[RMDB]
This 177-nucleotide RNA was probed chemically with 2A3. The 2A3 profile rests on 611 reads. It was measured as part of the RMDB library RFM100. Values cover nucleotides 27 to 126.
RNA sequence: GGGAACGACUCGAGUAGAGUCGAAAAAUAGGCAUUGCUUAAGAGCGCUGGAACGCGUCUGUCGCUCGCAAUAGCCUUCAUCGCUUGAUGCUUUUGACCACGGAUGUACUGGCACUGGUAGGAAAGCGGACACUCUGCACUUCGGUGCAGAGUGUCCAAAAGAAACAACAACAACAAC
Reactivity to 2A3 in 0.01 (KOAc 150mM, MgCl2 10mM, bicine 150mM(pH8.5), 24C), signal-to-noise 2, nucleotides 027 to 126: a000u120a000g000g000c000a020u000u010g000c010u300u300a160a130g000a000g000c000g030c010u000g030g000a250a050c020g000c010g130u100c060u030g160u110c000g000c020u000c060g000c000a000a000u100a150g000c000c000u000u010c040a050u120c060g020c140u000u050g000a000u040g000c000u020u020u100u160g080a050c000c000a000c040g000g200a150u160g040u220a150c070u040g070g000c010a000c130u000g030g040u040a010g020g120a040a020a000g010c000